[RMDB]
RNA sequence: GGGAACGACUCGAGUAGAGUCGAAAACUUAUUAGUAACUAAUCCAAAGCAAGUAUAGGAGAACAGGUUAUUAACUAUUUUUAGGCAGAUAAAAAAUAGUAUUUGACAGUCUAACACUAACUGAACACCACGCUCUCUUACUUCGGUAAGAGAGCAACGUUAAGCUAAUGUUCGCAUUAGCUUAACGAAAAGAAACAACAACAACAAC
Reactivity to DMS in 0.01 (KOAc 150mM, MgCl2 10mM, bicine 150mM(pH8.5), 24C), signal-to-noise 2, nucleotides 027 to 156: c020u010u010a110u000u010a080g020u020a060a110c060u000a120a120u020c020c030a050a170a190g030c000a100a110g010u000a160u000a120g000g010a120g010a040a080c070a080g020g000u000u010a050u000u010a070a090c000u000a030u010u000u000u000u000a130g010g000c060a100g010a150u030a010a020a040a040a020a020u000a030g000u000a140u020u000u000g020a090c020a050g010u000c070u000a030a080c050a070c020u000a020a090c030u000g000a030a070c070a090c070c020a100c070g010c000u000c000u000c000u000u000a010c010u000u000c300g050g000u000a010a010g020a030g010a000g010c010a000a000
Reactivity to 2A3 in 0.01 (KOAc 150mM, MgCl2 10mM, bicine 150mM(pH8.5), 24C), signal-to-noise 6, nucleotides 027 to 156: c020u100u110a040u070u110a190g040u030a050a070c030u030a060a060u020c030c030a090a050a050g030c040a060a030g050u110a070u130a190g040g030a050g020a070a040c050a060g010g040u030u040a050u050u070a060a020c010u010a050u030u030u020u020u030a030g070g000c030a020g050a150u170a080a040a000a000a010a010u030a010g030u030a170u060u060u110g040a020c020a020g020u010c040u080a100a010c040a020c080u060a150a020c030u040g050a090a010c020a030c090c020a060c090g000c010u000c000u000c000u000u000a000c000u020u040c070g070g000u000a000a000g000a000g000a000g010c000a000a000

Conditions: 150 mM KOAc, 10 mM MgCl2 and 150 mM bicine (pH 8.5), 24 C. Structure probing data (DMS and 2A3) for a 207-nucleotide construct. Values cover nucleotides 27 to 156. Source: RMDB library M2RFPK, as collected in RNAgym.